[RMDB]
RNA sequence: GGGAACGACUCGAGUAGAGUCGAAAAAUUAGGAAAUAAUCUCAGCAAGAGAUUAUUUGUGAUCACAAAAUAACAUUGGUAUGAUAUUUAGCCUUAUUUACAUAGGUGUAGCAAGAGUGUUAAUUUGUCAUAUAUGCUUUCUUGUAUGCUUUGGUGACACAACUAUGUUUUUCGAAACAUAGUUGUGAAAAGAAACAACAACAACAAC
Reactivity to DMS in 0.01 (KOAc 150mM, MgCl2 10mM, bicine 150mM(pH8.5), 24C), signal-to-noise 3, nucleotides 027 to 156: a140u010u000a200g020g010a070a020a020u000a000a010u000c010u000c000a220g020c300a170a250g000a040g020a020u000u000a010u000u000u010g010u010g000a120u010c060a130c050a060a060a080a130u000a050a080c030a080u000u000g030g010u000a050u000g010a060u000a030u000u010u000a100g010c020c020u000u000a230u010u010u010a060c080a130u000a060g020g000u010g030u000a050g020c060a040a110g020a060g030u000g000u000u000a020a060u000u000u000g020u000c050a060u000a060u000a070u000g010c040u000u000u000c050u000u000g020u000a100u000g020c010u000u000u010g000g000u010g000a300
Reactivity to 2A3 in 0.01 (KOAc 150mM, MgCl2 10mM, bicine 150mM(pH8.5), 24C), signal-to-noise 5, nucleotides 027 to 156: a010u120u090a030g000g070a020a020a010u010a010a030u000c000u010c020a100g070c090a160a100g020a010g000a010u000u010a000u000u020u040g060u060g050a090u100c040a020c040a110a090a050a080u140a110a020c050a060u060u080g040g000u140a080u070g060a060u050a090u150u100u090a020g000c000c000u090u100a130u100u130u090a040c040a040u130a030g040g000u060g030u060a000g020c030a050a030g020a020g060u060g040u050u050a050a090u070u090u040g060u050c030a010u050a010u020a020u150g040c010u060u110u050c020u030u060g040u040a090u070g010c020u070u070u110g070g010u070g020a010
An RNA of 207 nucleotides, treated with DMS and 2A3 and read out base by base. Conditions: 150 mM KOAc, 10 mM MgCl2 and 150 mM bicine (pH 8.5), 24 C. Values cover nucleotides 27 to 156. It was measured as part of the RMDB library OK3TST.